[RMDB]
RNA sequence: GGGAACGACUCGAGUAGAGUCGAAAAGGGUGUAUCUCCGCGACUAUAAAUAAAAAGGGGAUUUUAAAUGCUAGUCUGAUAAAAAAAGGCGACAUUGCCAAAUUGCGGGAAGUCCCUAAAGAUUCAACAUAGGUUUUGAAUUCGUUCAAAACCUAUGAAAAGAAACAACAACAACAAC
Reactivity to 2A3 in 0.01 (KOAc 150mM, MgCl2 10mM, bicine 150mM(pH8.5), 24C), signal-to-noise 4, nucleotides 027 to 126: g050g010g000u060g030u100a090u040c060u010c010c000g000c000g010a000c010u020a010u120a300a100a070u210a060a060a040a010a000g050g000g000g000a030u040u030u080u160a090a130a040u060g040c030u040a040g000u000c010u010g080a090u300a080a150a050a000a000a020a010g010g000c030g030a100c070a060u050u120g000c000c000a050a110a150u090u050g010c000g010g010g000a020a000g050u020c000c000c000u020a030a050a010g030a030u110u070c030a030a020
Reactivity to DMS in 0.01 (KOAc 150mM, MgCl2 10mM, bicine 150mM(pH8.5), 24C), signal-to-noise 4, nucleotides 027 to 126: g000g010g040u000g000u040a060u010c040u020c000c000g020c020g010a060c060u020a080u020a050a080a060u050a040a050a040a110a110g010g010g000g030a060u010u030u010u000a040a090a080u010g000c090u010a080g000u000c000u000g000a160u030a020a000a050a110a100a210a070g000g010c000g010a110c080a020u010u010g000c060c060a040a060a070u030u030g000c010g000g000g010a050a160g000u000c010c020c000u000a070a070a100g000a120u010u020c070a050a160
Conditions: 150 mM KOAc, 10 mM MgCl2 and 150 mM bicine (pH 8.5), 24 C. Structure probing data (2A3 and DMS) for a 177-nucleotide construct.